[RMDB]
RNA sequence: GGGAACGACUCGAGUAGAGUCGAAAAAUCAAUAUGGUUUUCAGCUGACAUUGCCUGAACGGACAACAGGCUGAACAGGAGGAAAGAAGAUACGCAUUUUACCAUAUGUUACACCUCGCGAGAGUCACAGUGGGGUAGUCUUCGGACUACCCCACUGAAAAGAAACAACAACAACAAC
Reactivity to DMS in 0.01 (KOAc 150mM, MgCl2 10mM, bicine 150mM(pH8.5), 24C), signal-to-noise 1, nucleotides 027 to 126: a040u040c030a060a060u020a000u020g030g000u000u020u000u000c040a040g050c000u000g040a080c040a260u000u010g010c070c010u000g000a060a270c140g020g000a000c040a040a010c200a150g000g000c000u020g040a000a070c300a080g000g000a090g000g010a000a000a060g020a060a130g000a020u030a020c130g000c110a050u000u000u020u000a040c000c070a000u000a000u000g000u010u000a090c120a070c000c000u010c000g030c130g000a180g080a030g000u010c050a160
Reactivity to 2A3 in 0.01 (KOAc 150mM, MgCl2 10mM, bicine 150mM(pH8.5), 24C), signal-to-noise 1, nucleotides 027 to 126: a000u110c130a020a010u070a030u030g080g000u030u010u010u010c000a030g000c000u000g160a120c000a240u170u030g030c000c000u150g030a060a060c030g070g260a060c000a000a020c000a000g030g030c000u000g000a070a060c040a090g060g060a100g040g000a040a030a120g080a080a030g010a140u120a030c080g010c090a000u000u000u130u160a050c000c000a000u060a000u080g000u000u060a030c020a030c050c000u000c000g000c030g000a020g000a030g110u000c000a000